An RNA of 177 nucleotides, treated with 2A3 and read out base by base. It was measured as part of the RMDB library OK1LIB. The reactions ran in a buffer of 150 mM KOAc, 10 mM MgCl2 and 150 mM bicine (pH 8.5), at 24 C.

RNA sequence: GGGAACGACUCGAGUAGAGUCGAAAAUAGCAAAAUAUUUCUCAACGCUCGACAUAACUAGCGGUUUUCAUCAAAUCGAGAUGAAUCCAAAAGAUAUCACCAAAACAUUACAGUCGAAGGGGGUCACGAUCGAGCUAGGUUUCGACCUAGCUCGAUCAAAAGAAACAACAACAACAAC
Reactivity to 2A3 in 0.01 (KOAc 150mM, MgCl2 10mM, bicine 150mM(pH8.5), 24C), signal-to-noise 2, nucleotides 027 to 126: u010a000g180c160a000a000a020a070u300a270u080u100u000c000u000c060a020a020c000g030c110u090c000g150a170c040a060u220a130a080c060u000a000g000c000g000g000u000u000u100u030c000a000u000c010a120a160a090u060c070g060a070g000a160u090g000a000a000u000c050c040a050a090a000a050g010a050u150a070u050c000a100c110c000a000a080a140a110c010a070u030u050a190c100a000g070u070c050g010a200a210g000g000g000g000g000u110c180a000c020